[RMDB]
RNA sequence: GGGAACGACUCGAGUAGAGUCGAAAAGAUAUGGACGAGAUCUACCCACCAUACGCUGUUCGGAAACGAACAGGUAUGAGGAUCAGUGAAAGUCCUAAGUCAAAACUCUAGGGUUCGCCCUAGAGAAUCUUUUCUAUUUGUUCGCAAAUAGAAAAGAAAAAGAAACAACAACAACAAC
Reactivity to DMS in 0.01 (KOAc 150mM, MgCl2 10mM, bicine 150mM(pH8.5), 24C), signal-to-noise 5, nucleotides 027 to 126: g000a050u000a050u010g000g000a010c000g010a180g000a010u000c010u000a100c010c040c100a300c060c000a000u000a000c010g010c000u000g010u010u000c010g020g000a020a020a030c000g010a010a000c000a000g000g010u010a000u000g010a120g000g000a010u000c010a180g000u010g020a140a110a230g000u000c000c000u000a020a080g000u000c010a090a110a130a220c010u000c000u010a010g000g000g040u000u010c290g010c000c000c000u000a010g000a000g000a030a080
Reactivity to 2A3 in 0.01 (KOAc 150mM, MgCl2 10mM, bicine 150mM(pH8.5), 24C), signal-to-noise 2, nucleotides 027 to 126: g000a010u020a020u070g000g010a000c040g060a050g000a300u020c000u030a100c070c040c040a020c050c010a010u010a010c070g030c300u010g000u010u020c000g010g000a030a000a010c000g010a010a010c000a000g010g000u000a010u000g000a000g000g000a030u030c030a020g210u140g300a300a100a050g000u020c000c000u010a040a000g000u000c020a040a000a070a270c000u000c000u000a010g100g030g080u040u080c300g100c030c000c010u000a000g000a000g000a000a010